[RMDB]
RNA sequence: GGGAACGACUCGAGUAGAGUCGAAAAUUGGGUAUAUAUUCUCAUUACCAAUAAGAAAAUAGCGAAAAUAGAGUUGGGAAUAACGAACAAGACUGUCAUCAUAUUCAGAAAUAACUGAAAGCGUGGGACUCAUUUAUCACUUCGGUGAUAAAUGAGUAAAAGAAACAACAACAACAAC
Reactivity to 2A3 in 0.01 (KOAc 150mM, MgCl2 10mM, bicine 150mM(pH8.5), 24C), signal-to-noise 1, nucleotides 027 to 126: u090u020g080g000g020u100a070u030a050u060a110u120u060c020u010c010a030u050u040a020c000c000a020a030u220a130a050g060a170a120a010a030u110a010g020c020g090a020a050a000a080u240a080g110a010g150u210u070g000g020g000a000a150u060a080a030c060g010a050a000c000a050a030g040a010c020u010g060u090c030a020u010c000a000u040a090u180u040c000a010g130a120a200a050u170a160a050c000u020g040a030a010a010g060c130g020u020g080g000g000
Reactivity to DMS in 0.01 (KOAc 150mM, MgCl2 10mM, bicine 150mM(pH8.5), 24C), signal-to-noise 2, nucleotides 027 to 126: u000u020g000g020g000u000a160u000a080u000a110u010u020c010u000c010a140u000u000a110c020c020a070a060u000a080a110g010a120a080a100a070u010a060g000c030g000a040a030a060a080u010a080g010a150g030u000u000g010g010g010a070a000u020a080a100c120g000a090a080c100a060a090g000a060c060u000g010u000c060a030u000c060a080u000a070u000u000c020a030g000a100a050a070u010a070a090c030u000g000a060a070a120g020c120g010u010g010g000g000